[RMDB]
RNA sequence: GGGAACGACUCGAGUAGAGUCGAAAAUGGCUCCUCGUUCGGAUCGGCUUUCCGCUGCCUUCCGCUGGAUGACGACGGGUUAUCCGGCGGUCGACGCACGGUCAUGCACCCCCGAUCCGUCGCCCCCGACCUCCCCCAAGUUCGCUUGGGGGAGGUCAAAAGAAACAACAACAACAAC
Reactivity to 2A3 in 0.01 (KOAc 150mM, MgCl2 10mM, bicine 150mM(pH8.5), 24C), signal-to-noise 2, nucleotides 027 to 126: u160g030g000c010u000c010c000u000c020g060u110u180c040g010g000a000u000c000g010g020c030u020u030u000c020c030g020c210u030g000c010c000u000u000c000c000g000c000u000g000g000a000u030g000a000c070g080a130c100g300g090g000u020u000a000u000c000c000g040g010c000g010g000u000c020g050a050c080g010c000a000c010g000g000u030c060a080u200g040c010a120c050c050c020c000c010g010a010u020c000c000g000u010c020g010c020c000c000c000c000